[RMDB]
RNA sequence: GGGAACGACUCGAGUAGAGUCGAAAAAUGCAACUUGCGGUAAGUCAGCUUUCAUUUUGAUGAACCUGUAUUUGUGAUCAUCUACUUGAUGCAUUUCUCUGGCUGAAAGAGCAGCAUUGUGUGAUAGAUCUAAGUAGAAAGAUAGAAUUGAAAGAAGUCUUGUGAUAGCGUUCGCGCUAUCACAAGAAAAAGAAACAACAACAACAAC
Reactivity to 2A3 in 0.01 (KOAc 150mM, MgCl2 10mM, bicine 150mM(pH8.5), 24C), signal-to-noise 2, nucleotides 027 to 156: a000u120g000c020a050a030c050u080u060g000c060g010g130u160a100a070g080u080c030a040g010c030u010u010u160c090a060u110u070u010u090g100a070u040g010a050a070c030c050u160g070u080a110u110u210u010g080u050g030a030u010c040a000u000c000u080a050c000u000u050g010a050u060g020c050a060u020u080u050c070u020c020u080g120g000c090u020g120a250a200a040g080a020g070c010a000g020c010a070u170u020g050u010g000u010g030a050u010a070g040a040u000c000u060a020a000g020u040a030g110a020a080a000g040a010u130a050g080a100a230u130u180g030a150a000a080g140a070a000g060
This 207-nucleotide RNA was probed chemically with 2A3. The RNA was probed in 150 mM KOAc, 10 mM MgCl2 and 150 mM bicine (pH 8.5) at 24 C. For 2A3, 586 sequencing reads were counted.